Conditions: 150 mM KOAc, 10 mM MgCl2 and 150 mM bicine (pH 8.5), 24 C. Structure probing data (2A3 and DMS) for a 177-nucleotide construct. The data come from the RNA Mapping Database (RMDB), libraries RFM100 and RFMREP. For 2A3 the reverse transcriptase was SuperScript II with manganese.
[RMDB]
RNA sequence: GGGAACGACUCGAGUAGAGUCGAAAAGUUCAACGACUAGCGAGUGAUGUAAAUCAGUCAAAUAAUCUCGCCACGAGCGCCCGACAUCUUGAUAUUUACUUAGACCCCCGCUUAAGUAAAUAUGGCCACUUAUUAAGUUUUUCGAAACUUAAUAAGUAAAAGAAACAACAACAACAAC
Reactivity to 2A3 in 0.01 (KOAc 150mM, MgCl2 10mM, bicine 150mM(pH8.5), 24C), signal-to-noise 7, nucleotides 027 to 126: g060u060u080c050a100a020c050g060a020c030u060a000g020c010g020a010g030u040g030a050u050g050u150a090a180a150u210c060a030g170u060c030a010a030a110u120a040a070u100c020u000c020g000c000c020a030c040g050a040g000c010g020c000c000c000g040a040c030a090u060c040u040u110g040a000u000a000u020u010u000a010c010u010u020a070g090a200c000c000c010c010c010g030c040u030u030a010a000g000u010a000a010a000u020a010u010g080g030c060c000
Reactivity to DMS in 0.01 (KOAc 150mM, MgCl2 10mM, bicine 150mM(pH8.5), 24C), signal-to-noise 6, nucleotides 027 to 126: g010u010u010c090a090a140c080g000a070c090u010a100g010c020g020a030g010u010g010a070u000g000u020a080a100a060u020c110a120g010u000c060a040a070a130u020a160a110u020c020u000c020g020c010c090a140c110g010a080g010c070g010c020c010c020g000a080c130a040u020c060u000u010g010a060u000a010u000u000u000a010c010u000u000a020g000a140c040c010c010c010c050g000c120u010u010a010a010g000u010a010a000a010u000a010u000g010g020c130c080